[RMDB]
Chemical mapping of a 207-nucleotide RNA with 2A3 and DMS.
For DMS the reverse transcriptase was MarathonRT.
The RNA was probed in 150 mM KOAc, 10 mM MgCl2 and 150 mM bicine (pH 8.5) at 24 C.
Source: RMDB library OK3TST, as collected in RNAgym.
RNA sequence: GGGAACGACUCGAGUAGAGUCGAAAAGAGUACAUAUGCCCAGCCUUACUGCGUCGGCUGGAUGCUUCGUGCAAAUGCUAUGUACGCCUACGUAUAUGUGCGUAGAUGCCUAUAUUUUCUCUCCUGAGAAAAUAUAGAUGCAUACAAAGGCGAUGCAACCAUUAUCAGUAUUCGUACUGAUAAUGGUAAAAGAAACAACAACAACAAC
Reactivity to 2A3 in 0.01 (KOAc 150mM, MgCl2 10mM, bicine 150mM(pH8.5), 24C), signal-to-noise 9, nucleotides 027 to 156: g070a020g010u030a010c010a010u050a030u290g000c000c000c010a010g010c000c010u170u200a170c120u200g100c050g110u130c040g040g000c010u010g020g010a030u090g010c010u070u170c150g130u160g050c010a060a080a120u190g000c000u030a010u040g010u010a010c010g020c000c000u020a020c010g050u040a080u020a060u290g150u060g060c010g010u020a010g010a120u050g000c000c000u000a000u000a000u000u000u000u000c000u000c010u060c060c200u190g000a000g000a000a000a000a000u000a000u000a000g000a020u120g000c000a000u020a070c040a040a140a030g040g000c020g020a020u040g000c020a010
Reactivity to DMS in 0.01 (KOAc 150mM, MgCl2 10mM, bicine 150mM(pH8.5), 24C), signal-to-noise 5, nucleotides 027 to 156: g010a130g010u010a050c030a070u010a050u010g020c010c010c010a090g020c030c020u010u000a130c110u010g030c090g040u010c160g020g030c010u000g020g020a100u000g010c030u000u000c130g010u010g000c020a060a090a150u000g020c020u000a090u000g020u000a020c010g020c020c010u000a030c030g040u000a090u010a080u010g030u000g020c010g000u000a050g010a090u000g020c020c010u000a010u000a010u000u000u000u000c000u000c000u000c240c220u010g030a020g000a030a000a020a010u000a010u000a000g000a100u010g030c020a040u000a090c070a060a090a150g030g020c020g010a240u000g010c020a220